[RMDB]
RNA sequence: GGGAACGACUCGAGUAGAGUCGAAAAGAUAUGGAGUUGGCAGAGAAGGACUUAGGACCCGAAGAACGCUUUCGGAAACGAAAGCGGGAGGGUUCUAAGUCCUUCGACGAAGCCAACUCCUAAGUCACAUAACCAUGAUCUUCGGAUCAUGGUUAUGAAAAGAAACAACAACAACAAC
Reactivity to DMS in 0.01 (KOAc 150mM, MgCl2 10mM, bicine 150mM(pH8.5), 24C), signal-to-noise 2, nucleotides 027 to 126: g020a010u000a300u020g000g020a020g010u010u000g010g030c000a090g000a220g030a010a010g000g000a030c010u000u000a000g000g020a000c000c000c000g000a100a210g020a150a210c010g000c000u000u000u000c010g010g020a090a100a240c020g010a000a020a000g000c000g010g020g010a060g000g020g000u000u000c000u000a010a010g010u000c010c000u010u000c000g000a010c240g000a140a160g000c020c000a010a000c000u000c000c010u010a000a050g000u000c030a270